[RMDB]
RNA sequence: GGGAACGACUCGAGUAGAGUCGAAAAGGGCAUAUCUUCGGAUAUGCCCAAACGUCGAAAAGGAAAAGUCGCAUGCGUCGAUCGAACAACCUCGCAUGCGACAAACUCGGAGGUUCGCCUCCGAGAACCUUACAACUCUCUUCGGAGAGUUGUAAGGAAAAGAAACAACAACAACAAC
Reactivity to DMS in 0.01 (KOAc 150mM, MgCl2 10mM, bicine 150mM(pH8.5), 24C), signal-to-noise 2, nucleotides 027 to 126: g000g000g000c000a010u000a000u000c000u000u010c210g010g010a020u000a020u000g000c010c000c000a010a000a050c110g040u010c070g000a000a030a060a050g010g010a040a040a130a130g010u000c000g020c000a030u000g000c020g050u020c030g000a070u000c160g010a130a110c240a100a100c010c000u010c000g000c010a000u000g000c000g010a000c000a020a030a130c020u010c000g020g000a000g000g000u000u010c270g000c000c010u000c000c000g010a000g000a030a070
Reactivity to 2A3 in 0.01 (KOAc 150mM, MgCl2 10mM, bicine 150mM(pH8.5), 24C), signal-to-noise 2, nucleotides 027 to 126: g010g000g000c010a000u020a010u000c020u040u060c210g020g010a010u010a010u010g010c000c000c010a000a000a000c010g050u040c020g080a050a050a050a060g110g040a080a130a000a010g010u000c010g020c010a000u000g000c000g020u000c010g050a110u080c070g050a080a050c040a050a060c050c000u010c000g000c010a010u000g000c000g010a000c000a000a010a010c000u000c000g000g000a000g020g020u050u090c210g050c040c000u000c000c000g000a000g000a000a000